The record gives the reactivity of an RNA of 177 nucleotides to DMS and 2A3.
It was measured as part of the RMDB library OK2TRN.
Values cover nucleotides 27 to 126.
For 2A3, 1,043 sequencing reads were counted.
The reactions ran in a buffer of 150 mM KOAc, 10 mM MgCl2 and 150 mM bicine (pH 8.5), at 24 C.
Values are in units of 0.01, from 0 to 300, in steps of 10.

[RMDB]
RNA sequence: GGGAACGACUCGAGUAGAGUCGAAAACGGUUCGUGCCCGGCGACACGCUCGACGACGUGGUGGAUAUCGUUACCGCGCUGCGGGAUUCGGGCCGCUACCUCAGCAUCGACUACCUGGGCGAGAACGUGAGCCGUGAGGAUUCGUCCUCACGGCUCAAAAAGAAACAACAACAACAAC
Reactivity to DMS in 0.01 (KOAc 150mM, MgCl2 10mM, bicine 150mM(pH8.5), 24C), signal-to-noise 1, nucleotides 027 to 126: c050g000g030u000u010c010g000u000g030c020c000c000g060g020c070g020a250c210a130c130g000c120u000c050g000a070c010g020a180c210g020u010g010g010u000g010g010a010u000a080u000c070g010u000u000a230c010c020g010c010g020c080u030g020c000g050g000g000a280u020u000c030g000g000g000c010c020g020c040u000a010c000c050u050c050a080g010c140a220u000c000g000a060c010u000a160c190c030u000g000g000g020c000g020a030g000a020a020c100g000
Reactivity to 2A3 in 0.01 (KOAc 150mM, MgCl2 10mM, bicine 150mM(pH8.5), 24C), signal-to-noise 1, nucleotides 027 to 126: c030g060g010u070u040c030g080u170g000c050c010c040g030g010c160g020a120c010a040c210g020c030u040c040g020a040c040g030a000c040g010u030g000g000u080g010g030a050u090a040u300c050g020u080u110a030c000c000g010c030g000c180u210g010c000g000g000g070a110u090u060c010g000g000g000c000c030g000c010u030a010c010c000u000c040a020g010c000a080u050c020g010a020c040u060a040c010c050u050g010g030g010c000g000a010g010a080a020c040g020